Overview: Source: RMDB library OK2TST, as collected in RNAgym. This 177-nucleotide RNA was probed chemically with 2A3 and DMS. The reactions ran in a buffer of 150 mM KOAc, 10 mM MgCl2 and 150 mM bicine (pH 8.5), at 24 C. High DMS reactivity at an A or C suggests that its Watson-Crick edge is free. For 2A3, 2,897 sequencing reads were counted. The DMS profile rests on 9,182 reads. For 2A3 the reverse transcriptase was SuperScript II with manganese.
RNA sequence: GGGAACGACUCGAGUAGAGUCGAAAAAGGCCAAUGUCGAUAAAGGUACCGAAAUGAAAAAAGAUGAAUCAUUUGACAGUUCAGAGCUUAUUUCUGGUAUUGUUGGCGCUGAACAACAUGUAACGCAAUCCUCCCUUUUAUUCGUAAAAGGGAGGAUAAAAGAAACAACAACAACAAC
Reactivity to 2A3 in 0.01 (KOAc 150mM, MgCl2 10mM, bicine 150mM(pH8.5), 24C), signal-to-noise 4, nucleotides 027 to 126: a010g030g000c010c010a020a010u080g110u190c010g020a030u150a150a210a040g060g000u010a010c010c000g020a040a020a050u080g040a010a070a010a050a030a100g080a010u060g030a050a030u070c070a090u100u080u250g100a060c040a020g020u030u000c010a030g000a040g120c030u090u050a010u070u090u050c050u160g010g010u050a040u020u150g040u020u040g000g030c040g010c070u020g020a040a010c000a000a040c040a050u190g080u300a030a030c050g000c070a010
Reactivity to DMS in 0.01 (KOAc 150mM, MgCl2 10mM, bicine 150mM(pH8.5), 24C), signal-to-noise 7, nucleotides 027 to 126: a060g010g010c010c020a030a040u000g010u000c120g010a100u010a070a120a130g000g010u000a020c020c010g020a020a040a030u010g000a000a060a080a110a080a080g000a110u010g010a060a060u000c050a150u000u000u010g010a110c170a100g000u010u000c020a020g000a120g010c100u000u000a040u000u000u000c020u010g040g010u000a020u000u000g010u010u000g010g010c010g010c040u000g010a050a050c060a050a060c110a060u010g010u010a050a100c160g020c200a110